[RMDB]
RNA sequence: GGGAACGACUCGAGUAGAGUCGAAAACCCGGGAGCGGGGUCUGAGAGUGGGCGCGCCUGCCCUUACCGUCACACCUGAUCCGGAUCAUGCCGGCGAAGGGAGGUCAAGGAUGGCGUCCGACCUACACUGCAUGUGCAAGUUCGCUUGCACAUGCAGAAAAGAAACAACAACAACAAC
Reactivity to DMS in 0.01 (KOAc 150mM, MgCl2 10mM, bicine 150mM(pH8.5), 24C), signal-to-noise 1, nucleotides 027 to 126: c010c030c020g050g030g030a110g000c060g020g060g000g010u020c000u030g000a090g060a020g000u030g000g010g000c000g000c110g000c030c090u000g000c170c000c000u000u000a080c000c050g030u020c270a080c160a240c000c030u000g000a120u000c000c000g000g000a120u010c230a230u000g020c000c020g000g010c060g000a220a000g010g000g010a210g030g000u000c180a010a030g000g000a140u000g000g000c000g000u000c140c010g000a000c000c000u000a030c040a290
Reactivity to 2A3 in 0.01 (KOAc 150mM, MgCl2 10mM, bicine 150mM(pH8.5), 24C), signal-to-noise 2, nucleotides 027 to 126: c000c000c000g010g030g000a060g060c020g000g000g010g020u040c050u140g090a080g010a010g070u050g000g000g000c050g000c000g000c010c000u140g030c020c000c000u000u000a050c020c000g170u160c090a040c060a090c170c010u040g030a050u020c000c000g000g020a090u250c110a140u250g170c010c010g010g000c020g040a000a010g050g000g010a030g010g000u100c120a000a010g000g000a000u000g000g030c000g010u010c010c030g060a140c020c000u000a010c020a060